An RNA of 177 nucleotides, treated with DMS and 2A3 and read out base by base.
As a SHAPE reagent, 2A3 marks flexible, mostly unpaired nucleotides at the ribose 2'-OH.
The 2A3 profile rests on 2,125 reads.
The data come from the RNA Mapping Database (RMDB), library TTRDEL.
RNA sequence: GGGAACGACUCGAGUAGAGUCGAAAAGAUAUGGAGAUGAACUACAGCCGAUGUAAACGAAGAACUCGGAAACGAGGGAGUUUAUGGAGGCUGCAUCUCCUAAGUCAAACUGGUCUUCGGACCAGAACUCCACUUUAACGUUCGCGUUAAAGUGGAGAAAAGAAACAACAACAACAAC
Reactivity to DMS in 0.01 (KOAc 150mM, MgCl2 10mM, bicine 150mM(pH8.5), 24C), signal-to-noise 2, nucleotides 027 to 126: g020a030u000a300u010g030g010a030g050a030u000g000a060a040c110u010a300c030a010g000c020c000g010a300u000g000u020a000a000a010c000g000a080a150g030a120a170c010u000c000g000g000a100a080a250c020g000a010g000g030g000a040g010u000u000u000a000u000g000g010a300g000g000c000u040g000c000a020u010c000u010c000c000u000a000a090g010u010c040a040a120a190c000u000g000g000u000c000u000u000c150g000g000a010c000c020a000g000a050a050
Reactivity to 2A3 in 0.01 (KOAc 150mM, MgCl2 10mM, bicine 150mM(pH8.5), 24C), signal-to-noise 2, nucleotides 027 to 126: g050a010u100a050u150g000g020a040g000a020u020g000a090a090c110u190a050c300a000g010c000c030g000a030u160g040u040a040a000a020c000g210a300a050g000a130a030c000u000c020g020g150a070a040a040c010g010a010g010g050g000a060g020u040u000u010a020u030g100g010a040g010g010c010u000g000c000a000u000c000u000c000c000u000a060a020g000u000c050a000a070a160c000u010g000g000u000c000u050u070c300g070g000a010c000c000a000g020a020a010